RNA sequence: GGGAACGACUCGAGUAGAGUCGAAAAAUGGUUGUAAUUCCGGCAACCCGGAGACGUUCUGGACGCGGGUUCGAUUCCCGCCACCUCCACAGUGGGCAUUCUCAAGAGUGUUCAGUGUGGGGGUGCAUCGUAUGACGUUUUUCGAAACGUCAUACGAAAAAGAAACAACAACAACAAC
Reactivity to 2A3 in 0.01 (KOAc 150mM, MgCl2 10mM, bicine 150mM(pH8.5), 24C), signal-to-noise 2, nucleotides 027 to 126: a000u070g020g010u000u000g030u040a120a110u080u000c000c000g020g010c050a030a020c010c000c010g030g030a020g000a050c050g030u020u030c030u070g180g040a050c030g000c000g000g000g000u030u070c030g010a040u010u010c000c010c000g000c000c000a000c000c000u000c000c000a010c000a060g170u000g000g020g000c000a020u020u000c070u030c120a180a130g000a010g010u020g000u000u010c040a050g090u030g000u000g010g000g000g000g000u000g020c020a000
Reactivity to DMS in 0.01 (KOAc 150mM, MgCl2 10mM, bicine 150mM(pH8.5), 24C), signal-to-noise 3, nucleotides 027 to 126: a100u000g010g000u000u000g010u010a070a140u000u010c010c000g030g020c040a020a030c030c000c080g000g000a040g000a120c040g000u000u000c010u010g000g010a170c170g010c020g010g000g000u000u030c160g020a300u010u010c010c000c000g000c050c010a000c000c000u000c000c020a000c000a030g020u010g010g000g010c000a000u000u000c000u000c300a140a170g000a010g020u000g010u000u000c000a010g010u000g030u000g000g000g000g000g000u000g000c070a050